[RMDB]
RNA sequence: GGGAACGACUCGAGUAGAGUCGAAAAGACGUGAAAACGUUGCGUAUUGCUACAACACUUGGUUAGCUAUUUAGCUUUACUAAUCAAGACGCCGUCGUGCAGCCCACAAAAGUCUAGAUACGUCACACGCUUCUCACUAUUUCGAUAGUGAGAAGCGAAAAGAAACAACAACAACAAC
Reactivity to DMS in 0.01 (KOAc 150mM, MgCl2 10mM, bicine 150mM(pH8.5), 24C), signal-to-noise 2, nucleotides 027 to 126: g000a020c010g010u020g020a120a070a080a070c030g000u020u020g030c140g000u040a060u000u020g000c100u000a120c100a030a070c070a100c020u000u000g000g010u000u000a000g020c150u000a130u010u020u010a150g000c160u010u000u010a030c010u010a020a050u000c020a000a010g000a120c120g060c080c040g010u010c130g010u000g000c000a070g000c040c000c030a090c160a080a030a030a030g030u000c020u010a030g000a050u020a060c070g000u000c090a050c160a220
Reactivity to 2A3 in 0.01 (KOAc 150mM, MgCl2 10mM, bicine 150mM(pH8.5), 24C), signal-to-noise 3, nucleotides 027 to 126: g040a000c050g020u060g070a040a020a030a040c020g020u050u070g000c000g030u060a080u100u230g070c020u090a040c010a170a020c040a030c080u010u000g010g000u020u010a010g010c120u020a070u080u180u170a050g020c030u050u060u040a020c000u000a010a010u030c000a030a020g050a080c040g030c020c040g070u070c010g010u040g030c020a040g030c010c020c000a030c030a030a150a030a000g030u000c050u080a020g020a100u050a070c040g030u020c060a040c000a000
An RNA of 177 nucleotides, treated with DMS and 2A3 and read out base by base. It was measured as part of the RMDB libraries RFM100 and RFMREP. Reactivities are given for positions 27 through 126. The reactions ran in a buffer of 150 mM KOAc, 10 mM MgCl2 and 150 mM bicine (pH 8.5), at 24 C.